[RMDB]
RNA sequence: GGGAACGACUCGAGUAGAGUCGAAAAAGACACCCACUGCUCGAGGACGUCCUCCCUUCCCCCUCGAGCCUUCUUCGAGUCGGACCGGCUCAUCUCGGCAGAGGGCGGCAGUCCUGGGUUCUCUUAUAGACGCGCAUGUUCGCAUGCGCGAAAAGAAACAACAACAACAAC
Reactivity to DMS in 0.01 (KOAc 150mM, MgCl2 10mM, bicine 150mM(pH8.5), 24C), signal-to-noise 1, nucleotides 027 to 129: a010g060a150c040a090c290c060c140a290c000u000g020c050u010c070g000a000g020g000a000c100g030u000c060c010u030c000c000c000u010u010c030c030c000c000c050u010c050g030a130g030c020c140u030u000c060u030u000c130g000a060g030u000c030g030g000a190c000c000g000g000c010u010c030a080u030c020u050c050g070g000c090a100g000a120g040g000g040c120g000g000c180a080g010u010c090c000u000g010g000g050u010u010c040u020c030u030u010a070u050a120g010a170
Reactivity to 2A3 in 0.01 (KOAc 150mM, MgCl2 10mM, bicine 150mM(pH8.5), 24C), signal-to-noise 2, nucleotides 027 to 129: a000g060a030c030a060c000c050c010a080c000u010g020c010u000c000g000a020g000g150a100c010g040u000c000c030u080c020c010c000u060u060c030c000c000c000c010u020c030g010a020g000c020c020u030u090c000u020u040c070g000a020g000u020c040g090g100a130c050c000g020g040c000u000c010a050u000c000u030c010g030g000c020a010g050a070g010g000g000c000g000g000c000a020g010u060c000c040u000g060g000g000u090u030c010u060c000u020u140a130u040a080g060a020
This 170-nucleotide RNA was probed chemically with DMS and 2A3. For DMS, 5,752 sequencing reads were counted. The 2A3 profile rests on 3,261 reads.